This 177-nucleotide RNA was probed chemically with DMS. Values cover nucleotides 27 to 126. The DMS profile rests on 799 reads.
[RMDB]
RNA sequence: GGGAACGACUCGAGUAGAGUCGAAAAUUGUCAUGUUUCGACAUGACAAACAUAAGAUCUAGACAAAAACGGCCAAAAAGUCUAGAUCAAAUAAAGGCCGUAGACUAGGUUAGUUCGCUAACCUAAAUUCUCCAAGGAAAUUCGUUUCCUUGGAGAAAAAAGAAACAACAACAACAAC
Reactivity to DMS in 0.01 (KOAc 150mM, MgCl2 10mM, bicine 150mM(pH8.5), 24C), signal-to-noise 1, nucleotides 027 to 126: u020u000g000u020c000a000u000g000u010u010u040c210g030a050c000a010u000g000a010c000a040a040a050c140a090u000a140a090g000a000u030c000u000a000g010a000c000a070a120a060a080a020c000g000g010c000c000a090a020a050a070a230g000u000c000u000a020g000a040u000c000a060a050a050u000a090a110a200g000g000c000c000g040u000a180g000a140c250u000a020g000g000u000u010a020g000u000u000c200g000c010u010a000a000c000c000u000a000a020a150